Description
Conditions: 150 mM KOAc, 10 mM MgCl2 and 150 mM bicine (pH 8.5), 24 C. Structure probing data (2A3 and DMS) for a 177-nucleotide construct.
[RMDB]
RNA sequence: GGGAACGACUCGAGUAGAGUCGAAAAGUUAAUGAGUAGGAGGGCGUGAAGGUCGUGAAGAAGCUCGUGGCGUGAGCCUGAGUGAAACGGCCUUUAGUGCAGAUCUUGGUGGUAGUAGCAAAUAUUCACUGCUAGUAAAUUUCGAUUUACUAGCAGUAAAAGAAACAACAACAACAAC
Reactivity to 2A3 in 0.01 (KOAc 150mM, MgCl2 10mM, bicine 150mM(pH8.5), 24C), signal-to-noise 9, nucleotides 027 to 126: g030u050u070a100a040u140g060a020g050u070a030g030g050a040g020g030g010c020g010u040g020a010a010g010g000u010c010g000u030g070a120a120g060a070a020g070c010u010c070g240u080g000g000c040g020u090g020a020g000c000c000u010g010a000g010u210g010a080a050a010c000g000g000c000c000u000u000u000a030g000u030g000c010a010g010a130u020c020u050u070g020g000u010g040g000u020a010g020u020a010g010c040a030a100a030u170a120u160u140c060
Reactivity to DMS in 0.01 (KOAc 150mM, MgCl2 10mM, bicine 150mM(pH8.5), 24C), signal-to-noise 9, nucleotides 027 to 126: g010u010u010a070a080u020g000a080g020u010a070g010g010a070g000g000g020c040g010u010g010a030a020g000g010u000c010g010u000g020a110a130g010a170a300g000c010u010c000g010u010g010g010c010g010u040g000a190g010c000c000u000g000a020g000u000g000a050a100a030c010g000g000c000c000u000u000u000a030g010u020g020c060a060g000a060u010c040u010u000g010g010u000g000g010u000a050g010u010a050g010c080a050a060a070u020a070u010u010c120
Reactivities are given for positions 27 through 126.